[RMDB]
RNA sequence: GGGAACGACUCGAGUAGAGUCGAAAAGAUAUGGACCGUACGCAACGCGAUAAGACGGUGUCGGAAACGACACUCGUCUUUUGACGCGUUGGUACGGUCCUAAGUCAAAAGAGUACUUCGGUACUCAUCCCUCCCUAAAGUUCGCUUUAGGGAGGGAAAAAGAAACAACAACAACAAC
Reactivity to DMS in 0.01 (KOAc 150mM, MgCl2 10mM, bicine 150mM(pH8.5), 24C), signal-to-noise 3, nucleotides 027 to 126: g000a060u000a300u010g000g000a010c020c000g030u000a000c000g020c020a010a000c010g050c000g040a160u000a020a000g000a010c020g010g020u000g010u000c000g000g000a090a130a270c000g020a010c000a000c000u030c030g000u000c000u000u000u000u030g020a210c110g010c010g020u000u000g020g000u010a000c020g010g020u000c000c000u000a000a080g000u000c030a060a090a080a120g000a020g010u000a010c000u000u020c180g050g000u000a000c000u000c000a160
Reactivity to 2A3 in 0.01 (KOAc 150mM, MgCl2 10mM, bicine 150mM(pH8.5), 24C), signal-to-noise 1, nucleotides 027 to 126: g000a010u070a050u030g000g000a000c020c030g040u020a000c300g060c220a040a010c000g000c000g060a070u010a120a000g000a000c020g020g020u000g000u000c010g000g050a130a060a080c000g020a000c000a000c000u030c030g000u000c040u000u010u000u040g050a030c030g010c010g000u010u000g030g000u010a000c000g010g040u000c000c000u000a000a010g000u000c010a000a070a000a060g020a000g030u000a000c020u070u110c250g090g000u000a000c010u000c000a040
An RNA of 177 nucleotides, treated with DMS and 2A3 and read out base by base.
For 2A3, 2,620 sequencing reads were counted.
Reactivities are given for positions 27 through 126.